[RMDB]
RNA sequence: GGGAACGACUCGAGUAGAGUCGAAAAAGGCGCUGAUGCCCACCGCCAUCACGGCCCCGCUGCCGGUCAGCAGCCAGCCCCCUAUCGCCUCAGGGGACAGAAAAACACCAGCGGUGACGGCCACGCCGCCUAACUCCAUAUUCGUAUGGAGUUAGGCAAAAGAAACAACAACAACAAC
Reactivity to 2A3 in 0.01 (KOAc 150mM, MgCl2 10mM, bicine 150mM(pH8.5), 24C), signal-to-noise 5, nucleotides 027 to 126: a000g030g000c030g020c140u070g020a140u170g040c000c010c000a010c000c010g010c010c010a060u120c050a020c080g050g010c020c000c020c070g020c010u020g020c020c030g130g080u130c040a030g000c000a010g010c020c010a020g010c000c000c000c010c010u040a050u180c050g060c060c020u050c030a000g000g010g020g010a010c020a030g160a030a110a010a000a000c060a030c030c020a010g000c010g020g000u010g020a060c050g000g000c010c000a010c020g040c010c010
Reactivity to DMS in 0.01 (KOAc 150mM, MgCl2 10mM, bicine 150mM(pH8.5), 24C), signal-to-noise 5, nucleotides 027 to 126: a080g000g020c020g030c240u000g010a070u010g010c030c020c020a090c060c010g010c030c060a060u010c130a080c130g010g000c040c020c050c070g010c030u000g020c020c080g010g000u000c080a120g000c050a070g000c020c070a150g000c010c010c010c020c010u010a090u010c080g000c070c020u010c110a070g000g010g020g010a040c030a080g000a040a040a080a090a090c140a070c100c080a090g000c030g010g020u000g010a060c140g010g000c010c070a080c060g010c060c060
The record gives the reactivity of an RNA of 177 nucleotides to 2A3 and DMS. The DMS profile rests on 5,760 reads. Conditions: 150 mM KOAc, 10 mM MgCl2 and 150 mM bicine (pH 8.5), 24 C.